An RNA of 177 nucleotides, treated with 2A3 and DMS and read out base by base. DMS adducts were read by reverse transcription with MarathonRT. 2A3 adducts were read by reverse transcription with SuperScript II with manganese. The 2A3 profile rests on 6,102 reads.

RNA sequence: GGGAACGACUCGAGUAGAGUCGAAAAGAUAUGGAAGAGGAAGGCUUUUGACGAUUGGGUAGUCGGAAACGACUACCUGAUCGAUAAGCCUCCUCUUCCUAAGUCAAAACACUGGUUCGCCAGUGAACAUACGUGUCAGGUUCGCCUGACACGUAUGAAAAGAAACAACAACAACAAC
Reactivity to 2A3 in 0.01 (KOAc 150mM, MgCl2 10mM, bicine 150mM(pH8.5), 24C), signal-to-noise 3, nucleotides 027 to 126: g010a000u040a040u140g000g000a000a010g010a030g070g020a230a170g030g000c020u090u120u210u300g300a240c190g010a000u010u010g020g000g000u000a010g000u000c020g010g020a020a070a020c010g000a000c000u000a000c000c010u000g010a000u010c000g000a000u010a000a000g000c000c000u010c000c000u010c000u000u000c000c000u000a000a000g000u000c010a020a000a040a000c020a010c010u000g000g080u110u100c300g080c090c010a020g000u000g030a010a010
Reactivity to DMS in 0.01 (KOAc 150mM, MgCl2 10mM, bicine 150mM(pH8.5), 24C), signal-to-noise 4, nucleotides 027 to 126: g000a010u000a300u000g010g010a050a010g020a000g010g020a080a060g050g030c000u000u000u010u010g030a220c120g020a010u000u000g000g010g010u000a000g020u000c000g010g000a100a040a150c010g020a010c000u010a020c000c000u000g000a000u000c000g010a100u020a000a020g010c000c000u000c000c010u000c000u010u000c000c010u000a010a060g010u000c030a090a110a110a220c020a020c010u000g010g000u000u000c300g030c010c000a000g010u010g000a070a210